Description: Chemical mapping of a 207-nucleotide RNA with 2A3 and DMS. For DMS the reverse transcriptase was MarathonRT. The reactions ran in a buffer of 150 mM KOAc, 10 mM MgCl2 and 150 mM bicine (pH 8.5), at 24 C. For 2A3, 860 sequencing reads were counted. It was measured as part of the RMDB library OK3TST. High 2A3 reactivity points to a flexible backbone, as in loops and unpaired stretches. For 2A3 the reverse transcriptase was SuperScript II with manganese.

RNA sequence: GGGAACGACUCGAGUAGAGUCGAAAAUUCUCCGUGGCAAGGGAGAUUAGAAUCAUCCCGAUCCCAAGAGCCAGAAAGAACGGAGGGUUGUUGCAGGUCGUUAUCGGAGCGGCGAUUAUGGUUGCGGCCUUCUUUACUGGUGGCGGCUCGCUGGCGGCCACCCCUUUACGUUCGCGUAAAGGGGUGGAAAAGAAACAACAACAACAAC
Reactivity to 2A3 in 0.01 (KOAc 150mM, MgCl2 10mM, bicine 150mM(pH8.5), 24C), signal-to-noise 2, nucleotides 027 to 156: u060u010c000u000c000c010g030u010g000g020c040a110a090g010g010g010a020g040a030u110u070a160g200a210a080u090c060a090u020c000c000c000g030a090u070c000c010c010a120a000g060a000g120c020c030a070g110a080a110a010g030a110a010c000g000g000a020g010g030g040u020u010g000u000u000g000c120a070g030g180u020c000g000u040u030a130u140c010g080g020a120g040c010g020g000c000g020a050u090u230a110u240g060g000u100u130g050c000g100g000c020c000u200u090c000u100u170u110a190c170u060g010g010u000g040g050c000g060g000c020u030c030g020c010u040g070g000c000g030g000
Reactivity to DMS in 0.01 (KOAc 150mM, MgCl2 10mM, bicine 150mM(pH8.5), 24C), signal-to-noise 1, nucleotides 027 to 156: u000u000c000u000c010c010g040u010g010g090c060a160a110g020g040g020a120g020a180u010u000a180g030a140a210u000c100a120u010c000c000c020g000a190u000c000c060c010a140a110g010a130g030c020c030a130g010a040a090a180g010a110a090c040g030g050a010g030g000g010u000u010g000u000u000g010c040a080g030g030u050c010g040u000u000a040u050c070g000g000a130g020c080g000g000c040g000a110u000u020a050u000g040g050u040u000g010c020g000g100c010c020u000u010c020u010u000u000a090c010u010g010g020u000g000g040c050g000g050c020u010c040g010c040u000g000g030c060g000g030